[RMDB]
An RNA of 177 nucleotides, treated with 2A3 and DMS and read out base by base. For DMS the reverse transcriptase was MarathonRT.
RNA sequence: GGGAACGACUCGAGUAGAGUCGAAAAGAUAUGGACGAUAGUAAGGUAGCGUUUACUCGGAAACGAGUAGGGCGCUAUAAUCUUACUCGUCCUAAGUCAAAGCUGUCAUGGUUCGCCAUGACAGCAACUUCUCCAAUUUCUUCGGAAAUUGGAGAAGAAAAGAAACAACAACAACAAC
Reactivity to 2A3 in 0.01 (KOAc 150mM, MgCl2 10mM, bicine 150mM(pH8.5), 24C), signal-to-noise 2, nucleotides 027 to 126: g020a010u040a030u100g020g010a000c010g060a060u130a170g010u010a030a000g070g080u080a030g010c010g000u050u090u010a010c000u010c000g030g000a080a030a020c010g010a000g010u000a010g070g080g020c030g000c010u010a040u060a060a000u030c000u020u000a000c010u000c000g000u030c000c000u000a070a000g000u000c060a120a100a080g000c000u000g000u020c000a000u010g000g070u030u160c290g070c140c000a000u000g000a010c010a000g000c000a000a000
Reactivity to DMS in 0.01 (KOAc 150mM, MgCl2 10mM, bicine 150mM(pH8.5), 24C), signal-to-noise 3, nucleotides 027 to 126: g010a070u000a300u010g000g000a000c000g010a150u010a070g010u000a000a010g010g020u020a000g020c000g030u000u000u000a010c000u000c010g020g000a110a080a170c000g020a010g010u000a000g000g000g000c010g040c000u000a040u010a160a100u010c000u000u000a000c000u000c000g000u000c000c000u010a020a100g010u010c040a100a100a180g020c010u000g010u000c000a000u000g000g010u020u010c300g020c020c000a010u000g000a010c000a000g000c000a000a040
Notes:
For 2A3, 6,336 sequencing reads were counted. Conditions: 150 mM KOAc, 10 mM MgCl2 and 150 mM bicine (pH 8.5), 24 C. In probing experiments dimethyl sulfate is read out at A N1 and C N3, which are open when not base-paired. 2A3 adducts were read by reverse transcription with SuperScript II with manganese.